[RMDB]
RNA sequence: GGGAACGACUCGAGUAGAGUCGAAAACAAAGAUCAUGGGAUGCUACAAUGUGGAGAGGAUAUUCAACGCCUAAAGUUCGUUCCCGUCUAUCGCAAGACACCAGUUACUGAACAUGUCCUGUUGGAAAGAGAACAUGUUGAAGUAAUGAUGAACUGCCGCACGUAUCGCCUUCGGGCGAUACGUGCGAAAAGAAACAACAACAACAAC
Reactivity to 2A3 in 0.01 (KOAc 150mM, MgCl2 10mM, bicine 150mM(pH8.5), 24C), signal-to-noise 4, nucleotides 027 to 156: c050a000a070a010g060a040u130c030a080u120g060g010g000a010u040g050c040u030a030c040a130a120u070g040u040g080g000a030g020a010g010g030a020u040a080u110u130c110a060a060c030g050c010c010u120a170a060a040g000u090u020c010g000u000u000c000c000c000g000u010c010u070a080u120c030g010c080a060a010g040a040c010a020c030c000a030g000u010u000a000c020u010g020a030a020c000a000u010g010u000c010c000u040g090u200u040g090g080a090a060a010g060a010g010a010a010c010a000u030g000u000u030g040a030a010g000u010a010a010u060g050a060u040g030a030a020c030u020g010c010
This 207-nucleotide RNA was probed chemically with 2A3.